[RMDB]
RNA sequence: GGGAACGACUCGAGUAGAGUCGAAAAUAAUAGAAGAGUCAAAAUAUGAAAUUAUGUUUUUUGAAUCCAAGAUGUGUUGAAAAUGGUUAAUAGCUAAAUUAGCUUCAAAAGGAUUUAAAGUCUUUCCAUAAGGCAUUGGAUGGGUUAGAGCGCUCGCAAUCCUCAUUCUAUUCGUAGAAUGAGGAUUAAAAGAAACAACAACAACAAC
Reactivity to 2A3 in 0.01 (KOAc 150mM, MgCl2 10mM, bicine 150mM(pH8.5), 24C), signal-to-noise 1, nucleotides 027 to 156: u080a000a030u030a010g050a070a000g020a060g060u060c020a000a000a080a070u100a060u120g040a030a110a090u200u130a100u150g070u030u060u000u010u180u100g010a010a010u020c010c000a040a000g020a100u030g050u010g040u130u040g050a090a090a020a060u030g040g020u040u070a050a060u060a130g000c000u020a240a000a080u100u020a100g010c010u050u010c080a000a020a070a080g030g000a000u000u060u300a020a040a020g030u020c000u010u030u000c000c020a030u050a030a020g080g010c030a040u020u030g000g010a000u000g000g000g010u030u010a040g000a010g030c050g000c000u020c080g070c040
Reactivity to DMS in 0.01 (KOAc 150mM, MgCl2 10mM, bicine 150mM(pH8.5), 24C), signal-to-noise 2, nucleotides 027 to 156: u010a080a130u000a150g010a160a090g010a090g030u000c040a040a030a100a060u010a090u000g010a140a150a180u000u010a060u010g000u000u000u000u000u010u000g000a030a040u000c030c020a040a220g000a080u010g000u000g040u010u010g000a040a090a090a040u000g000g000u010u000a050a060u020a040g040c030u000a030a040a150u000u000a040g030c020u000u010c080a050a060a100a070g030g010a040u000u000u000a050a070a070g000u000c020u000u000u000c000c030a070u010a080a150g000g040c020a040u020u000g030g050a120u000g000g020g010u000u000a070g000a080g000c050g050c050u000c060g020c300

The record gives the reactivity of an RNA of 207 nucleotides to 2A3 and DMS. For 2A3 the reverse transcriptase was SuperScript II with manganese. Source: RMDB library OK3TST, as collected in RNAgym. The RNA was probed in 150 mM KOAc, 10 mM MgCl2 and 150 mM bicine (pH 8.5) at 24 C.